[RMDB]
RNA sequence: GGGAACGACUCGAGUAGAGUCGAAAAGAUAUGGAGGACAAGGUACGAUGAGGUUUAGUCGGAAACGACUGGGACCGAGUACCCUGUCCUCCUAAGUCAAACAAACGGGACUUCGGUCCCGUUUGAACAGAUUAGUGUCGUUCGCGACACUAAUCUGAAAAGAAACAACAACAACAAC
Reactivity to DMS in 0.01 (KOAc 150mM, MgCl2 10mM, bicine 150mM(pH8.5), 24C), signal-to-noise 2, nucleotides 027 to 126: g000a020u000a180u020g010g000a020g000g000a000c010a020a030g000g050u000a000c010g000a230u020g000a140g010g000u000u000u000a030g000u010c000g000g000a040a070a090c000g030a020c000u010g020g040g000a020c000c010g000a050g010u000a010c000c000c030u000g010u000c000c000u000c000c000u000a000a050g000u010c040a180a140a300c020a000a010a030c000g020g000g020a010c010u010u030c300g030g000u000c000c000c000g000u000u010u000g010a090a200